[RMDB]
RNA sequence: GGGAACGACUCGAGUAGAGUCGAAAAGGAUGUGGAUUCUCCACGGCAACGUAACUGAACGCGGAGACGUCGGCAGGAGUCCUGGGAAGAGUUCUCUUUUCUUCUUGACGGCCUAUCACCCUGAAAUGAUUCCAAGUGGUUUCGACCACUUGGAAUCAAAAGAAACAACAACAACAAC
Reactivity to 2A3 in 0.01 (KOAc 150mM, MgCl2 10mM, bicine 150mM(pH8.5), 24C), signal-to-noise 2, nucleotides 027 to 126: g080g000a070u090g030u090g130g000a020u060u040c030u000c020c000a030c000g020g000c030a080a030c040g050u100a050a060c040u100g060a110a010c070g050c030g080g010a020g030a070c030g010u010c040g040g040c030a030g040g030a010g030u070c000c000u050g020g010g000a060a000g030a000g080u170u030c040u020c000u060u070u080u030c000u080u010c000u030u000g040a030c030g080g020c000c000u050a090u060c030a090c000c000c000u000g030a010a060a070u050

An RNA of 177 nucleotides, treated with 2A3 and read out base by base. Conditions: 150 mM KOAc, 10 mM MgCl2 and 150 mM bicine (pH 8.5), 24 C. The data come from the RNA Mapping Database (RMDB), library RFM100.